[RMDB]
Chemical mapping of a 207-nucleotide RNA with 2A3 and DMS. The reactions ran in a buffer of 150 mM KOAc, 10 mM MgCl2 and 150 mM bicine (pH 8.5), at 24 C.

RNA sequence: GGGAACGACUCGAGUAGAGUCGAAAAGUGCUGUAUUCGUACAGCACAAAAAACCUUUGUGGAUGUAUAGGGAGAAUCCGAUUGGUCCCAUUGGGACUAGAGGAUUCGAAGAACUAUACUACCCACUCUGGUAAAAAGUGUCGUUUCGACGACACAAUCAACUGAGUGUAUUCGUACACUCAGUUGAAAAAGAAACAACAACAACAAC
Reactivity to 2A3 in 0.01 (KOAc 150mM, MgCl2 10mM, bicine 150mM(pH8.5), 24C), signal-to-noise 3, nucleotides 027 to 156: g000u000g000c000u000g000u010a050u060u100c160g000u020a000c000a000g040c030a000c020a000a000a020a010a010a000c010c000u010u010u010g010u000g010g000a000u000g020u010a020u000a010g010g020g010a040g010a000a000u010c010c020g070a110u080u160g020g000u020c050c000c030a170u090u300g020g000g000a000c010u010a010g010a010g060g000a000u000u000c010g000a040a010g000a000a000c000u000a000u000a000c000u020a050c000c000c000a010c000u000c000u000g010g010u100a100a140a020a030a020g000u000g010u010c010g000u020u080u150c270g070a010c000g010a000c010a000c000a020a100
Reactivity to DMS in 0.01 (KOAc 150mM, MgCl2 10mM, bicine 150mM(pH8.5), 24C), signal-to-noise 3, nucleotides 027 to 156: g040u000g000c000u000g010u000a020u000u000c300g040u010a040c000a020g040c000a010c000a010a030a080a070a050a020c020c010u000u000u000g010u000g020g020a040u000g010u010a010u000a010g020g000g000a210g000a040a000u000c000c010g030a300u000u010g030g010u000c010c000c010a300u010u000g030g020g000a020c010u000a040g000a300g010g000a030u000u000c000g010a090a150g000a090a200c020u000a020u000a020c010u000a030c030c000c000a010c010u000c030u000g010g020u000a040a110a080a080a140g010u000g030u000c000g000u000u010u000c210g030a100c020g030a010c000a000c000a070a200
The 2A3 profile rests on 3,100 reads.